[RMDB]
RNA sequence: GGGAACGACUCGAGUAGAGUCGAAAAUGCAGAUUGAGCUUUGUACAUGUACCACUUGACAAUCUUGACGGGUGAUCACAUUGGUUUUAAUGCAAUUGGAAAUGGGAUUGACUUGAAUCGGAUUGCAUAUCUGGGAAUAGUUCGCUAUUCCCAGAUAAAAAGAAACAACAACAACAAC
Reactivity to 2A3 in 0.01 (KOAc 150mM, MgCl2 10mM, bicine 150mM(pH8.5), 24C), signal-to-noise 5, nucleotides 027 to 126: u080g000c010a010g080a130u100u110g050a050g070c030u080u090u090g030u070a030c020a090u070g030u090a050c000c030a050c060u070u070g050a080c020a020a040u010c020u090u300g010a020c040g040g000g000u030g020a020u030c030a010c010a080u030u050g050g040u080u090u070u130a090a090u170g060c060a080a100u060u100g120g040a080a030a030u040g020g000g030a040u030u100g150a050c010u000u010g010a030a040u030c010g030g000a040u030u030g010c010a030
Reactivity to DMS in 0.01 (KOAc 150mM, MgCl2 10mM, bicine 150mM(pH8.5), 24C), signal-to-noise 8, nucleotides 027 to 126: u010g020c050a060g000a110u000u000g000a110g010c100u000u000u000g010u000a080c090a060u000g010u010a160c040c040a090c110u010u000g010a100c060a040a050u000c040u000u000g020a100c090g000g000g020u000g010a040u000c050a030c040a040u000u000g010g010u000u000u000u010a070a090u010g010c110a060a080u010u000g010g010a050a030a060u000g000g000g010a090u000u000g010a060c020u000u000g000a060a150u000c040g010g010a050u000u000g010c070a110

Overview
Structure probing data (2A3 and DMS) for a 177-nucleotide construct. Reactivities are rounded to 0.1 and cut off at 0 and 3. For DMS, 11,972 sequencing reads were counted. The 2A3 profile rests on 7,023 reads. High 2A3 reactivity points to a flexible backbone, as in loops and unpaired stretches. The reactions ran in a buffer of 150 mM KOAc, 10 mM MgCl2 and 150 mM bicine (pH 8.5), at 24 C. The data come from the RNA Mapping Database (RMDB), library OK2TRN. DMS adducts were read by reverse transcription with MarathonRT.